[RMDB]
RNA sequence: GGGAACGACUCGAGUAGAGUCGAAAAAAGCAAUAAGUUAGACGUGAGUAUGGCUAUACAAAUCAUCUGGAACGUAAGUUCUAAUGUAUGUAUUGUAUGUUGUAUUUGCAGUUUUAUGAUAGCAAAACUCUACUAGUCAGUUCGCUGACUAGUAGAGAAAAGAAACAACAACAACAAC
Reactivity to DMS in 0.01 (KOAc 150mM, MgCl2 10mM, bicine 150mM(pH8.5), 24C), signal-to-noise 2, nucleotides 027 to 126: a100a080g030c030a040a080u000a050a140g000u000u000a040g010a020c040g020u000g010a020g020u000a010u000g010g020c010u030a010u000a010c010a000a030a300u000c010a010u000c030u000g010g000a000a000c000g000u020a080a160g010u000u000c000u010a030a070u000g020u010a020u020g020u000a140u010u000g010u000a010u000g010u000u000g010u000a020u000u000u000g010c000a100g020u000u000u000u010a030u010g010a070u010a070g000c030a060a080a050a140
Reactivity to 2A3 in 0.01 (KOAc 150mM, MgCl2 10mM, bicine 150mM(pH8.5), 24C), signal-to-noise 2, nucleotides 027 to 126: a000a000g120c130a120a050u210a120a010g090u020u040a010g010a030c020g000u000g000a010g000u000a000u010g020g000c100u090a010u010a030c010a010a060a040u020c000a000u060c020u050g000g010a000a010c000g040u130a120a110g000u020u000c020u040a130a060u090g110u110a020u010g020u030a100u080u030g000u000a010u000g020u020u010g010u000a010u000u010u030g000c100a060g000u010u000u020u070a090u080g050a050u090a030g000c000a030a020a000a090